[RMDB]
RNA sequence: GGGAACGACUCGAGUAGAGUCGAAAAGGUCUUGAGGGAUCUAGGGGCAGACAGAACAGUCGGUGGAGCGGUGAAAUGCGUAGAGAUCGACUGGAAUGCCGAUGGCGAAGGCGGUCUGCUGGGGAUCGAAGAUCUGAAAGUUCGCUUUCAGAUCUUCAAAAGAAACAACAACAACAAC
Reactivity to 2A3 in 0.01 (KOAc 150mM, MgCl2 10mM, bicine 150mM(pH8.5), 24C), signal-to-noise 2, nucleotides 027 to 126: g000g000u020c030u100u110g050a190g030g020g020a040u050c060u130a040g030g000g000g000c020a010g000a040c030a030g090a140a020c000a010g010u000c010g040g000u020g010g000a030g000c000g040g000u080g070a060a050a050u140g010c040g060u290a000g010a010g000a000u010c000g000a000c010u020g010g040a090a030u120g010c000c000g090a120u190g100g030c110g050a090a020g020g000c020g000g010u030c020u010g000c000u020g000g000g000g010a010u090c080
Reactivity to DMS in 0.01 (KOAc 150mM, MgCl2 10mM, bicine 150mM(pH8.5), 24C), signal-to-noise 3, nucleotides 027 to 126: g010g020u010c060u000u010g020a150g020g000g000a020u010c060u000a100g000g010g030g000c010a020g000a020c030a110g020a120a160c020a030g000u000c000g010g000u000g020g000a090g000c040g000g000u000g010a050a120a120u020g010c030g000u010a090g000a300g010a020u000c000g010a030c020u000g000g000a050a120u020g030c010c010g010a170u010g000g020c160g010a110a130g000g000c020g020g000u000c000u000g000c050u010g000g000g010g010a160u010c110